[RMDB]
RNA sequence: GGGAACGACUCGAGUAGAGUCGAAAAUAUGUUCAUCUUGAAAUACCACUUCAUGCUGUUCCUCUGAGUGCAGUCAAAUGUUAGGAUUCAGCAGUAAUUUCAUACAUGUCAUCAGGUGUAAUUGACUAAGGAAGGGUACAUAACAAGAGAAAUAAUCCAGGUCUUAGAAAUUCGUUUCUAAGACCUGAAAAGAAACAACAACAACAAC
Reactivity to DMS in 0.01 (KOAc 150mM, MgCl2 10mM, bicine 150mM(pH8.5), 24C), signal-to-noise 3, nucleotides 027 to 156: u000a050u020g020u000u000c050a140u000c040u000u000g010a120a160a100u010a060c040c010a090c030u010u010c010a140u000g010c010u000g020u000u000c020c010u000c100u020g020a140g060u010g010c060a080g010u000c140a060a100a120u000g000u010u000a060g010g010a110u000u000c020a050g030c040a030g020u000a060a070u000u000u000c060a140u000a070c050a060u000g010u000c070a070u000c090a110g010g030u000g010u000a040a130u000u020g030a090c150u010a100a150g030g020a100a050g030g000g030u000a010c020a110u010a100a150c020a040a070g010a100g000a110a050a080u000a090a190u000c020
Reactivity to 2A3 in 0.01 (KOAc 150mM, MgCl2 10mM, bicine 150mM(pH8.5), 24C), signal-to-noise 6, nucleotides 027 to 156: u230a050u120g060u040u040c050a140u010c110u000u030g030a060a060a040u040a020c010c020a230c060u010u010c020a050u030g000c000u000g010u010u010c030c000u020c080u090g110a080g100u130g080c070a030g050u120c050a100a090a110u100g040u110u130a020g000g020a080u140u040c000a020g000c010a000g040u060a020a080u040u090u080c030a020u040a180c030a040u100g140u150c030a120u060c050a070g020g090u030g020u040a060a090u060u060g080a040c020u060a050a050g100g000a010a010g010g010g010u040a040c040a070u140a070a050c010a010a000g050a000g040a090a040a020u130a040a020u110c040

This 207-nucleotide RNA was probed chemically with DMS and 2A3. For DMS, 6,367 sequencing reads were counted. The 2A3 profile rests on 6,356 reads. Conditions: 150 mM KOAc, 10 mM MgCl2 and 150 mM bicine (pH 8.5), 24 C. It was measured as part of the RMDB library OK3TST.